The record gives the reactivity of an RNA of 177 nucleotides to DMS. The reactions ran in a buffer of 150 mM KOAc, 10 mM MgCl2 and 150 mM bicine (pH 8.5), at 24 C.
RNA sequence: GGGAACGACUCGAGUAGAGUCGAAAAGACAGAAGUUUCAAAAAGGAAAAGGCCAAAAUCUACAUUCGGUGAGGAGAUUGGUACAGGUAGAACAAUAGAUGAGGAAUACCUUUUGGAUCCUCUUGAAUGGUCAUACUCGAUUCGUCGAGUAUGACCAAAAAGAAACAACAACAACAAC
Reactivity to DMS in 0.01 (KOAc 150mM, MgCl2 10mM, bicine 150mM(pH8.5), 24C), signal-to-noise 1, nucleotides 027 to 126: g010a230c140a040g000a060a080g030u010u000u000c010a030a080a040a030a050g010g000a020a070a170a090g050g000c030c030a040a060a070a100u020c010u000a120c100a080u000u000c140g050g020u000g030a210g040g000a030g000a120u000u000g020g020u000a090c090a060g000g020u000a050g010a100a060c040a060a080u020a050g020a060u000g020a150g000g000a010a060u000a150c010c000u000u000u000u000g030g010a180u000c000c030u000c010u000u010g020a160a160